Chemical mapping of a 207-nucleotide RNA with DMS and 2A3. For 2A3 the reverse transcriptase was SuperScript II with manganese. The data come from the RNA Mapping Database (RMDB), library OK3TST.
RNA sequence: GGGAACGACUCGAGUAGAGUCGAAAAGAAGGAUAGCAUAUUAUCAAAGGCAGGAAGUCCAGUGAGGAGAAAUUACAGAAUGGAUUCAGGGUUGAGGAGGAAAGUGCUGUCCAGGAGAAUUUGCUAUCCACAUUGGACUUGCAGGUCAGAGGGUAGAAACACAUGAGAUAUUCGUAUCUCAUGUGUUAAAAGAAACAACAACAACAAC
Reactivity to DMS in 0.01 (KOAc 150mM, MgCl2 10mM, bicine 150mM(pH8.5), 24C), signal-to-noise 4, nucleotides 027 to 156: g020a150a090g020g020a040u000a030g030c020a100u000a100u000u000a120u000c070a060a100a080g010g020c050a090g010g030a070a090g020u000c060c040a070g000u010g000a090g020g020a100g000a110a040a090u010u000a210c080a110g010a080a100u000g000g000a140u000u000c030a090g020g010g010u010u000g000a100g020g020a080g020g000a050a060a060g020u010g010c020u000g020u000c040c020a130g020g010a130g000a060a070u000u000u000g010c030u000a040u000c000c000a060c070a140u010u010g000g010a050c030u000u000g020c040a040g000g000u010c050a040g010a080g020g020g020u010a050g020a140
Reactivity to 2A3 in 0.01 (KOAc 150mM, MgCl2 10mM, bicine 150mM(pH8.5), 24C), signal-to-noise 7, nucleotides 027 to 156: g090a050a040g010g010a010u010a010g010c030a020u050a060u230u140a090u230c080a080a020a030g030g000c020a010g040g050a050a010g030u000c020c030a030g010u040g030a040g040g010a040g020a000a100a010u170u110a060c050a070g120a070a050u090g020g050a040u100u090c050a030g000g040g060u070u080g050a030g010g020a010g010g020a090a050a010g040u060g020c030u040g010u010c010c000a010g030g050a040g030a030a040u050u050u080g010c020u030a030u020c020c000a020c010a050u040u040g010g000a010c010u020u070g020c040a010g000g040u030c030a020g020a040g050g000g020u090a040g080a040